[RMDB]
RNA sequence: GGGAACGACUCGAGUAGAGUCGAAAAGAAGAGAAGCGCGCGAAUUGGAAACCAGCGAACCAUAUUACGCGCGCAAGGAACCGGGCCUUGGUUCCUUGGAAAGACUAGAUAAUAUCGCUGGUAAAGAAGCAUAUUUACCGUUCGCGGUAAAUAUGCUAAAAGAAACAACAACAACAAC
Reactivity to 2A3 in 0.01 (KOAc 150mM, MgCl2 10mM, bicine 150mM(pH8.5), 24C), signal-to-noise 3, nucleotides 027 to 126: g100a080a010g120a010g030a170a040g010c000g000c000g000c000g010a010a000u020u000g020g030a040a090a130c010c000a000g000c000g000a040a040c000c010a000u040a040u210u090a080c000g000c000g000c000g000c000a000a000g020g000a000a000c000c020g060g190g020c040c060u070u060g030g000u000u000c000c000u000u000g020g070a090a070a010g020a020c050u150a040g060a170u190a180a050u110a060u100c020g000c010u000g000g010u010a000a010a040g100a010
Reactivity to DMS in 0.01 (KOAc 150mM, MgCl2 10mM, bicine 150mM(pH8.5), 24C), signal-to-noise 2, nucleotides 027 to 126: g000a130a110g000a170g030a160a090g000c000g000c000g000c020g010a050a000u030u030g010g020a180a110a090c000c020a010g020c010g020a020a150c020c040a000u000a030u000u000a150c000g000c020g020c010g000c000a010a000g000g010a020a000c000c000g030g010g010c090c060u000u030g000g000u020u000c000c000u010u010g000g010a100a050a070g010a050c120u020a010g000a090u010a060a100u010a140u010c000g010c000u010g000g000u040a060a070a080g000a070
Annotation
Source: RMDB library OK1LIB, as collected in RNAgym. Chemical mapping of a 177-nucleotide RNA with 2A3 and DMS. The RNA was probed in 150 mM KOAc, 10 mM MgCl2 and 150 mM bicine (pH 8.5) at 24 C. Values cover nucleotides 27 to 126. For 2A3 the reverse transcriptase was SuperScript II with manganese. The DMS profile rests on 3,100 reads.